[RMDB]
RNA sequence: GGGAACGACUCGAGUAGAGUCGAAAAGAAAUAUUGGUCCUGGAUGGGCGCGUUUUCUCUGUCAAUGCUCUUCUGGGCUGAACUCCUCUGGAUCAUUACUCACUAAUCCCUGACCCCGCUGCGGCGGCAACUCUAUUGCAUUCGUGCAAUAGAGUUGAAAAGAAACAACAACAACAAC
Reactivity to DMS in 0.01 (KOAc 150mM, MgCl2 10mM, bicine 150mM(pH8.5), 24C), signal-to-noise 6, nucleotides 027 to 126: g000a080a080a130u040a090u010u010g000g010u010c020c030u020g020g010a070u010g000g000g010c070g000c130g000u010u010u010u010c030u010c040u020g020u020c080a090a090u010g000c010u000c020u010u020c120u010g010g000g000c030u010g010a070a130c070u000c030c030u000c040u010g000g000a050u000c030a050u010u000a070c050u010c040a080c070u010a100a120u010c010c000c000u010g010a120c070c060c020c020g000c020u000g020c120g010g010c020g010g000
Reactivity to 2A3 in 0.01 (KOAc 150mM, MgCl2 10mM, bicine 150mM(pH8.5), 24C), signal-to-noise 9, nucleotides 027 to 126: g040a000a070a010u250a040u090u100g030g000u080c010c010u030g060g050a060u060g070g010g020c060g010c030g030u030u010u110u040c070u010c020u040g130u090c070a080a110u150g010c010u020c000u140u080c060u110g020g020g000c000u020g010a050a040c010u010c020c000u020c040u040g020g020a030u030c010a040u020u110a060c020u030c050a050c040u070a070a070u040c010c000c000u030g100a110c040c000c020c000g000c010u040g010c070g100g000c000g000g010
This 177-nucleotide RNA was probed chemically with DMS and 2A3. Source: RMDB libraries RFM100 and RFMREP, as collected in RNAgym. Values cover nucleotides 27 to 126. The reactions ran in a buffer of 150 mM KOAc, 10 mM MgCl2 and 150 mM bicine (pH 8.5), at 24 C. For DMS the reverse transcriptase was MarathonRT.